[RMDB]
Chemical mapping of a 177-nucleotide RNA with DMS and 2A3. Conditions: 150 mM KOAc, 10 mM MgCl2 and 150 mM bicine (pH 8.5), 24 C.
RNA sequence: GGGAACGACUCGAGUAGAGUCGAAAAUUUUGGGCAGAUAUCAACUGUUACGCGUCUUGCCACUGUAUUGUAAACACUACAACAAAUUUUAAGUUUAAUACACCUACGCGACAAGAUGAAUCGGAAAUGCUUAUCCUACAUUCGUGUAGGAUAAGCAAAAAGAAACAACAACAACAAC
Reactivity to DMS in 0.01 (KOAc 150mM, MgCl2 10mM, bicine 150mM(pH8.5), 24C), signal-to-noise 2, nucleotides 027 to 126: u000u000u000u020g000g040g010c020a060g000a130u000a150u010c140a050a070c050u000g000u000u000a110c110g010c040g000u000c040u000u020g020c030c020a090c050u000g020u000a000u010u010g010u000a050a050a030c120a090c100u000a070c100a050a100c140a070a100a190u000u010u000u020a050a150g000u000u000u010a050a100u000a040c000a040c140c080u010a040c100g050c060g000a040c020a040a030g010a080u000g010a060a100u010c090g000g000a050a040a090
Reactivity to 2A3 in 0.01 (KOAc 150mM, MgCl2 10mM, bicine 150mM(pH8.5), 24C), signal-to-noise 1, nucleotides 027 to 126: u070u070u040u140g010g000g020c000a020g020a010u070a040u130c030a110a120c010u040g000u020u040a040c010g030c000g020u000c060u080u020g040c000c000a060c050u000g010u030a050u060u010g070u070a040a000a000c000a010c080u130a040c020a190a000c040a040a250a060u070u020u050u170a150a000g000u000u000u000a020a000u000a020c040a010c020c010u010a000c080g000c030g020a030c010a030a000g010a070u080g040a010a010u010c080g020g060a000a150a000